[RMDB]
RNA sequence: GGGAACGACUCGAGUAGAGUCGAAAAUUUGAUUUGUUUGAAAAUGAUCAAGAAAGCGAGAUUGAACUACAAAUUAAAAAUUUGAAUUUAUCUAAUAUGACACCAAUUGAGGCAUUGGUGAAGUUAACAUAUGUUAUAUAUUCGUAUAUAACAUAUGAAAAGAAACAACAACAACAAC
Reactivity to DMS in 0.01 (KOAc 150mM, MgCl2 10mM, bicine 150mM(pH8.5), 24C), signal-to-noise 3, nucleotides 027 to 126: u000u000u000g000a020u000u000u020g000u010u000u010g000a110a100a110a120u000g000a060u000c010a040a210g020a090a130a160g030c110g000a140g000a090u000u000g010a120a120c050u000a080c000a010a010a020u010u020a020a060a030a080a160u010u000u000g000a100a130u000u000u000a040u030c020u010a080a120u020a040u000g000a300c000a010c020c010a010a040u000u000g020a110g020g010c130a140u000u000g000g000u000g000a030a130g010u000u010a040a170
Reactivity to 2A3 in 0.01 (KOAc 150mM, MgCl2 10mM, bicine 150mM(pH8.5), 24C), signal-to-noise 2, nucleotides 027 to 126: u050u000u000g000a000u070u030u030g040u040u110u110g060a040a010a000a030u110g040a080u010c020a010a080g170a250a170a000g230c050g030a020g000a030u010u100g000a070a030c020u050a020c030a020a040a070u070u070a080a050a130a100a060u140u130u110g050a080a080u000u120u210a050u100c000u000a040a090u120a130u250g010a030c010a010c040c000a010a000u090u060g050a120g140g000c040a030u000u000g010g090u000g020a050a000g030u020u050a030a000
The data come from the RNA Mapping Database (RMDB), library OK2TRN.
This 177-nucleotide RNA was probed chemically with DMS and 2A3.
The 2A3 profile rests on 1,805 reads.
Values cover nucleotides 27 to 126.